[RMDB]
About this RNA:
Chemical mapping of a 207-nucleotide RNA with DMS and 2A3.
RNA sequence: GGGAACGACUCGAGUAGAGUCGAAAAACGAGUGAGUUACGACUCACUCGACUUUUAAUGCUACCCAAAGGUCGUGACAUGUCGAUAAAACGCAGAGUCAAAAAGUCCGACGUUACGACGUCGGACAACGAGCGAGUUCUGUUCGCAGAACUCGCAACGGUGACUUAUAGUUCGCUAUAAGUCACCGAAAAGAAACAACAACAACAAC
Reactivity to DMS in 0.01 (KOAc 150mM, MgCl2 10mM, bicine 150mM(pH8.5), 24C), signal-to-noise 1, nucleotides 027 to 156: a090c030g010a080g000u000g000a080g020u020u000a200c230g000a120c000u020c000a010c030u000c000g040a000c030u010u010u000u000a060a080u020g000c060u000a080c010c000c040a050a080a140g010g010u000c010g070u030g010a300c020a110u020g000u000c000g000a120u010a050a050a150a140c090g060c120a100g000a250g020u000c060a020a020a030a170a120g000u010c000c020g000a020c000g030u030u000a130c100g000a130c000g030u010c030g000g020a010c000a000a000c100g000a150g010c000g000a040g010u000u000c000u010g040u010u000c300g050c020a070g040a020a030c000u010c010g000c000a000a000
Reactivity to 2A3 in 0.01 (KOAc 150mM, MgCl2 10mM, bicine 150mM(pH8.5), 24C), signal-to-noise 3, nucleotides 027 to 156: a010c010g000a000g000u010g000a000g000u030u090a110c260g030a040c080u000c010a000c000u010c000g000a000c000u030u060u040u150a120a110u140g030c040u090a100c000c000c000a080a030a010g120g000u090c060g070u040g050a030c010a070u050g050u170c020g060a080u060a180a160a020a020c020g000c040a010g040a060g090u060c030a040a060a000a100a000g000u000c000c000g010a020c000g000u010u020a060c210g020a010c010g030u000c000g000g040a000c000a000a000c010g040a020g000c000g000a000g000u000u000c020u010g050u050u050c170g000c050a000g000a000a000c000u000c000g000c000a000a000

The 2A3 profile rests on 2,314 reads. For DMS, 1,548 sequencing reads were counted.